Notes:
The data come from the RNA Mapping Database (RMDB), library M2PK90. Chemical mapping of a 177-nucleotide RNA with DMS and 2A3. Reactivities are given for positions 27 through 126. For DMS, 1,274 sequencing reads were counted. In probing experiments dimethyl sulfate is read out at A N1 and C N3, which are open when not base-paired. The 2A3 profile rests on 1,276 reads.
RNA sequence: GGGAACGACUCGAGUAGAGUCGAAAAUUAUAUAGCGUGUGCAAGACGGUGAACUUGCCAUGAUCUGGAACUUUAGUGCUGAGGUCCGAGUUCCAGAUCAUCAUUUCGGACCUCAGCACUAAUAUAAGCUUAUAGUGCGAUUCGUCGCACUAUAAGCAAAAGAAACAACAACAACAAC
Reactivity to DMS in 0.01 (KOAc 150mM, MgCl2 10mM, bicine 150mM(pH8.5), 24C), signal-to-noise 2, nucleotides 027 to 126: u000u010a060u010a210u020a050g000c020g030u000g000u010g020c010a010a020g000a090c090g050g000u010g000a110a140c000u000u000g000c020c010a020u000g000a090u010c050u000g010g000a050a150c160u000u000u000a020g020u000g010c010u000g000a030g030g000u000c000c000g000a050g010u010u010c090c090a070g020a070u000c110a020u000c090a070u000u020u000c010g010g000a030c000c000u000c000a010g010c000a020c010u000a000a030u010a050u000a050a150
Reactivity to 2A3 in 0.01 (KOAc 150mM, MgCl2 10mM, bicine 150mM(pH8.5), 24C), signal-to-noise 1, nucleotides 027 to 126: u140u010a040u010a110u110a140g040c020g010u020g110u130g070c010a010a020g020a020c070g130g050u200g070a170a080c020u040u000g020c010c000a010u040g040a070u050c000u030g060g010a040a040c020u020u040u040a000g000u000g000c000u010g000a000g000g000u000c020c000g010a010g040u030u040c010c020a020g020a010u010c000a000u010c010a000u040u130u000c010g000g000a010c000c010u000c000a000g000c010a000c000u000a010a000u010a010u000a000a000